[RMDB]
RNA sequence: GGGAACGACUCGAGUAGAGUCGAAAAGAUAUGGAUCCAGGUUGUAGCUACUGUCGGAAACGACAGAAUAGCGCAGAUAACCGGAUCCUAAGUCAAAGUUUAGCGUACGCUUCGGCGUACGCUAAACGAUUAGCUAUCCGUUCGCGGAUAGCUAAUCAAAAGAAACAACAACAACAAC
Reactivity to 2A3 in 0.01 (KOAc 150mM, MgCl2 10mM, bicine 150mM(pH8.5), 24C), signal-to-noise 3, nucleotides 027 to 126: g000a010u020a000u040g000g000a000u000c050c110a230g050g010u010u020g050u040a050g000c000u000a010c000u010g000u010c000g000g000a010a010a000c000g010a000c010a000g000a060a060u080a010g020c000g020c150a020g020a170u010a010a010c000c000g000g010a000u020c000c000u000a000a010g010u010c050a270a060a130g000u000u010u010a000g000c000g010u000a010c020g010c080u030u110c300g080g000c010g000u010a000c010g000c000u000a000a000a000c010
Reactivity to DMS in 0.01 (KOAc 150mM, MgCl2 10mM, bicine 150mM(pH8.5), 24C), signal-to-noise 4, nucleotides 027 to 126: g010a020u000a020u010g000g000a010u000c000c000a190g030g010u000u000g010u010a050g010c010u000a080c000u010g000u000c000g020g010a010a000a030c000g010a010c000a000g000a100a150u000a010g020c000g020c280a110g000a040u000a010a010c010c010g000g000a010u000c000c000u000a000a060g000u000c000a140a120a170g010u000u000u000a000g000c010g010u000a010c000g020c000u000u010c250g020g020c000g020u000a000c000g000c000u000a000a000a000c020

Notes: Chemical mapping of a 177-nucleotide RNA with 2A3 and DMS. The data come from the RNA Mapping Database (RMDB), library TTRDES. Reactivities are given for positions 27 through 126. The DMS profile rests on 9,471 reads. As a SHAPE reagent, 2A3 marks flexible, mostly unpaired nucleotides at the ribose 2'-OH. The reactions ran in a buffer of 150 mM KOAc, 10 mM MgCl2 and 150 mM bicine (pH 8.5), at 24 C.